RNA sequence: GGGAACGACUCGAGUAGAGUCGAAAAGCAUUGUACGGGAAAUAAAUGAACGCUGAACUAAGAGUAAGCGGAAUUCUUAGGAAAUCGUUCAAUGCGAAAAGAAAAAGACAUGGAAACAUGUCGAAAAGGGAUAAGAUAUCUUCGGAUAUCUUAUCCCAAAAGAAACAACAACAACAAC
Reactivity to 2A3 in 0.01 (KOAc 150mM, MgCl2 10mM, bicine 150mM(pH8.5), 24C), signal-to-noise 5, nucleotides 027 to 126: g010c000a000u000u000g010u030a010c010g020g000g120a060a110a050u120a040a090a030u090g020a060a000c010g010c010u010g020a050a000c020u070a290a040g050a020g170u020a000a010g030c000g010g020a010a070u020u040c050u020u030a010g010g130a090a080a040u030c000g000u020u030c000a000a000u000g010c010g020a000a090a000a020g090a020a080a030a000a000g000a000c010a000u010g020g000a020a020a010c000a010u000g000u000c000g010a010a020a000a030
Reactivity to DMS in 0.01 (KOAc 150mM, MgCl2 10mM, bicine 150mM(pH8.5), 24C), signal-to-noise 4, nucleotides 027 to 126: g000c000a020u010u000g000u000a010c000g000g000g030a160a110a110u020a010a010a020u000g000a300a300c010g020c010u030g000a120a300c100u020a080a110g030a120g000u000a090a050g000c050g000g000a020a070u000u000c170u020u010a020g000g000a010a120a090u010c000g000u000u000c030a000a010u000g020c000g010a090a060a090a030g020a060a060a060a070a040g000a000c000a000u010g000g010a100a040a100c010a000u000g010u020c000g000a020a050a070a100
Description: Structure probing data (2A3 and DMS) for a 177-nucleotide construct. The RNA was probed in 150 mM KOAc, 10 mM MgCl2 and 150 mM bicine (pH 8.5) at 24 C. It was measured as part of the RMDB library OK1LIB. DMS adducts were read by reverse transcription with MarathonRT.